[RMDB]
RNA sequence: GGGAACGACUCGAGUAGAGUCGAAAAGAAAGAAAGAAAGACUGUUUUCGUCUACCCUGUAGAUCGAGCUGUGUGUUUUGAAGUGUUCAUACACAAGCUAGACUGCAAGGUGAACGACAAAAUGAAAUUGCGUUAUUAACUUCGGUUAAUAACGCAAAAAAGAAACAACAACAACAAC
Reactivity to 2A3 in 0.01 (KOAc 150mM, MgCl2 10mM, bicine 150mM(pH8.5), 24C), signal-to-noise 4, nucleotides 027 to 126: g050a010a020a000g160a020a030a000g150a050a110a020g150a030c130u090g070u060u020u010u030c010g000u000c000u010a020c000c010c000u030g000u000a010g020a300u000c000g000a000g010c000u010g030u020g020u000g050u300u100u140u090g060a100a100g150u120g070u300u010c020a030u020a020c000a000c000a000a000g010c000u000a000g010a000c000u000g000c010a000a000g000g000u040g000a010a000c010g010a000c020a010a060a030a040u180g040a050a020a170
Reactivity to DMS in 0.01 (KOAc 150mM, MgCl2 10mM, bicine 150mM(pH8.5), 24C), signal-to-noise 3, nucleotides 027 to 126: g020a090a050a070g000a090a080a080g000a060a050a100g020a130c090u000g010u000u010u030u000c000g000u000c010u000a040c020c000c050u010g010u000a000g010a070u000c000g020a020g020c000u000g000u020g010u000g020u010u000u000u010g000a030a280g030u060g010u020u010c010a000u000a010c020a000c010a070a040g030c000u000a080g000a040c000u000g000c030a030a060g000g010u000g000a040a000c010g000a040c300a020a050a020a020u050g010a070a100a120
An RNA of 177 nucleotides, treated with 2A3 and DMS and read out base by base. It was measured as part of the RMDB libraries RFM100 and RFMREP. The RNA was probed in 150 mM KOAc, 10 mM MgCl2 and 150 mM bicine (pH 8.5) at 24 C. DMS adducts were read by reverse transcription with MarathonRT. 2A3 adducts were read by reverse transcription with SuperScript II with manganese. DMS (dimethyl sulfate) methylates the pairing face of unpaired adenines and cytosines.